Structure probing data (2A3) for a 207-nucleotide construct.
[RMDB]
RNA sequence: GGGAACGACUCGAGUAGAGUCGAAAAAGUCACCUAUUACGAUAGGUGACAUUUGAACCAGCGAACAAUUCAGUUGCGAGAUUCGAGGUUUCAGUCUGUAUCAUAGUAGCCAUUACGAUGGCUACAACUCACUCCCGACUGUUCGCAGUCGGGAGAAGUACAGGCUACUGUUCGCAGUAGCCUGUACAAAAGAAACAACAACAACAAC
Reactivity to 2A3 in 0.01 (KOAc 150mM, MgCl2 10mM, bicine 150mM(pH8.5), 24C), signal-to-noise 1, nucleotides 027 to 156: a000g000u000c000a000c000c000u000a000u000u050a030c280g030a020u000a000g000g000u000g020a000c000a000u010u020u100g020a030a010c000c010a000g130c000g010a000a000c030a140a150u260u080c000a020g000u020u000g000c010g000a000g000a010u000u020c010g000a000g080g060u050u140u300c050a060g030u050c000u020g010u010a100u080c120a040u040a160g000u000a000g000c000c020a000u030u000a080c240g130a030u010g000g030c000u000a000c000a000a010c010u040c010a030c020u000c020c010c000g000a000c000u020g030u130u100c240g000c100a000g010u000c010g000g000g000a000g000a000a000